The record gives the reactivity of an RNA of 177 nucleotides to 2A3 and DMS. For DMS the reverse transcriptase was MarathonRT.

RNA sequence: GGGAACGACUCGAGUAGAGUCGAAAAACAGACUGAACCUCGAUUAUACGUCAGAAAUGGAAAAAGCGAUGCAGCUGUCACACGGAAUUGGAUACGAGGAAUAUGGACGCCGGCUGGAAACAAGAAACAGCUGACAUUCGUUCGCGGAUGUUAGCUGAAAAGAAACAACAACAACAAC
Reactivity to 2A3 in 0.01 (KOAc 150mM, MgCl2 10mM, bicine 150mM(pH8.5), 24C), signal-to-noise 9, nucleotides 027 to 126: a000c010a010g080a040c020u050g030a060a070c010c000u010c010g010a020u040u080a080u100a160c060g040u020c020a040g110a070a140a040u200g060g060a100a110a020a020a020g040c020g030a040u150g060c040a020g010c030u060g020u130c010a030c010a010c070g040g080a060a090u100u090g040g040a040u060a110c030g020a020g020g050a020a020u170a090u100g030g010a010c030g030c040c010g010g020c020u020g010g020a030a050a000c040a080a020g050a050a090a010
Reactivity to DMS in 0.01 (KOAc 150mM, MgCl2 10mM, bicine 150mM(pH8.5), 24C), signal-to-noise 9, nucleotides 027 to 126: a090c080a100g010a090c050u010g010a090a090c070c010u010c030g010a090u020u010a090u020a120c100g010u000c040a050g010a070a090a080u020g000g010a050a050a070a080a060g000c030g010a070u010g010c080a080g010c020u000g000u010c090a060c070a080c050g000g010a060a080u020u020g000g010a060u010a050c070g000a050g000g000a080a070u020a070u020g000g010a080c070g000c040c030g000g000c060u010g000g000a060a050a050c060a070a080g010a130a050a070
Notes
Conditions: 150 mM KOAc, 10 mM MgCl2 and 150 mM bicine (pH 8.5), 24 C. Reactivities are given for positions 27 through 126. Source: RMDB library OK1LIB, as collected in RNAgym. The 2A3 profile rests on 13,296 reads.